[RMDB]
RNA sequence: GGGAACGACUCGAGUAGAGUCGAAAAUGGCCAUCGAUAUGCGCAUGGGGGUUCUCUUUCAGCAUGGCGCGCUGUUUUCCGCGCUGAACGUGCUGGAGAACAUUCAGGUGCCGAUGCGUGAAUAUCAAUUACUUUUAUUAUUCGUAAUAAAAGUAAUAAAAGAAACAACAACAACAAC
Reactivity to DMS in 0.01 (KOAc 150mM, MgCl2 10mM, bicine 150mM(pH8.5), 24C), signal-to-noise 9, nucleotides 027 to 126: u010g010g010c030c020a060u000c070g010a100u010a060u010g010c010g020c000a020u000g010g010g000g000g000u000u000c000u000c010u000u020u010c030a020g030c010a020u000g000g010c040g020c000g020c090u000g010u000u000u010u010c140c120g010c010g010c010u010g010a050a110c130g020u000g010c000u000g010g000a010g000a010a010c010a090u000u000c070a050g010g020u000g010c000c010g010a010u000g000c070g010u000g000a100a060u000a070u010c020a140
Reactivity to 2A3 in 0.01 (KOAc 150mM, MgCl2 10mM, bicine 150mM(pH8.5), 24C), signal-to-noise 4, nucleotides 027 to 126: u110g080g040c030c000a050u050c030g020a030u020a050u300g010c020g000c000a020u030g040g000g000g010g000u000u000c010u000c000u020u170u080c010a010g000c000a010u030g040g000c010g000c000g000c030u030g110u100u120u120u050c040c010g000c000g000c020u070g040a120a040c030g020u010g000c010u000g010g000a000g000a010a000c000a000u080u100c040a030g090g040u060g060c000c010g030a000u010g000c030g030u030g080a090a040u070a030u120c010a010